The data come from the RNA Mapping Database (RMDB), library OK2TST.
This 177-nucleotide RNA was probed chemically with DMS and 2A3.
For 2A3 the reverse transcriptase was SuperScript II with manganese.
For DMS the reverse transcriptase was MarathonRT.
For DMS, 1,683 sequencing reads were counted.
Conditions: 150 mM KOAc, 10 mM MgCl2 and 150 mM bicine (pH 8.5), 24 C.
RNA sequence: GGGAACGACUCGAGUAGAGUCGAAAAAUAGCUGGAACCACCAUCACUAAAAUUUAGCGAAAAUGUUAUGGAUCCAUCAAUCGUAUUAUAGGAGGACAGGUCAUUUUGAGCAGUACAUGUGAAAGUACAUGCCAGUACAUUUCGAUGUACUGGCAUGAAAAGAAACAACAACAACAAC
Reactivity to DMS in 0.01 (KOAc 150mM, MgCl2 10mM, bicine 150mM(pH8.5), 24C), signal-to-noise 2, nucleotides 027 to 126: a050u010a040g000c080u010g010g010a060a090c040c020a070c140c020a030u010c040a040c020u010a010a090a100a110u000u010u000a040g010c030g020a040a070a060a040u010g000u010u000a050u000g010g010a090u020c030c010a030u020c090a090a090u010c100g000u000a170u000u000a090u010a070g000g000a060g010g000a080c120a010g020g030u000c030a030u000u000u010u000g000a100g010c060a030g000u000a020c040a040u010g010u000g010a090a040a060g010u010a060
Reactivity to 2A3 in 0.01 (KOAc 150mM, MgCl2 10mM, bicine 150mM(pH8.5), 24C), signal-to-noise 1, nucleotides 027 to 126: a000u020a010g010c020u020g000g000a000a000c030c000a010c000c020a060u010c020a020c030u130a040a020a090a300u140u160u110a050g000c010g090a050a010a000a080u060g040u040u040a030u010g050g010a020u000c010c000a020u000c030a040a060u060c040g070u090a050u230u080a080u130a050g020g020a010g060g020a010c000a010g020g020u020c000a020u000u090u190u060g040a040g000c030a000g020u010a000c040a030u120g060u070g070a120a060a020g000u000a020